[RMDB]
Structure probing data (DMS and 2A3) for a 207-nucleotide construct.

RNA sequence: GGGAACGACUCGAGUAGAGUCGAAAAAACCAGGACAACAGGCUUAAUCCCAGUAGAAUUGAGUUCUGUCACAUAGCAGCCAGUCCUGGUCCCAGCUGACCAUCUUGCAACCAUAUGCUCUUGGUCAAAGAGGGAGCUAAAGUAGGAGAGUGAGGGAGUAUAAUGGUACCUUCGGGUACCAUUAUACAAAAGAAACAACAACAACAAC
Reactivity to DMS in 0.01 (KOAc 150mM, MgCl2 10mM, bicine 150mM(pH8.5), 24C), signal-to-noise 2, nucleotides 027 to 156: a110a030c000c000a050g000g000a060c020a160a040c020a040g000g000c000u000u020a030a030u010c010c020c010a290g030u000a250g000a030a030u000u020g010a050g020u000u000c000u000g000u000c060a090c110a130u000a140g030c070a050g000c060c080a110g000u000c000c020u010g000g010u010c010c010c010a200g010c140u000g010a050c050c010a020u020c020u000u000g000c030a040a100c070c210a160u010a230u000g020c030u000c030u000u000g030g030u000c040a060a140a090g000a090g000g020g000a130g080c040u010a030a050a070g000u000a070g000g000a060g000a080g010u010g000a060g000g000g010a240
Reactivity to 2A3 in 0.01 (KOAc 150mM, MgCl2 10mM, bicine 150mM(pH8.5), 24C), signal-to-noise 3, nucleotides 027 to 156: a000a000c010c000a000g000g000a000c010a090a000c020a120g000g020c000u030u050a030a030u130c010c060c060a050g040u110a030g060a180a060u040u120g020a020g050u200u270c030u040g030u050c010a030c040a170u130a030g080c050a020g040c030c010a000g010u000c000c000u000g000g000u020c010c000c000a020g030c030u040g010a050c010c000a040u040c080u040u120g000c050a030a080c080c030a140u110a080u300g030c040u030c020u040u050g030g020u030c000a000a050a000g020a010g000g000g010a030g010c030u140a100a040a010g040u060a020g030g030a030g010a020g050u080g020a050g010g000g020a060

Source: RMDB library OK3TST, as collected in RNAgym.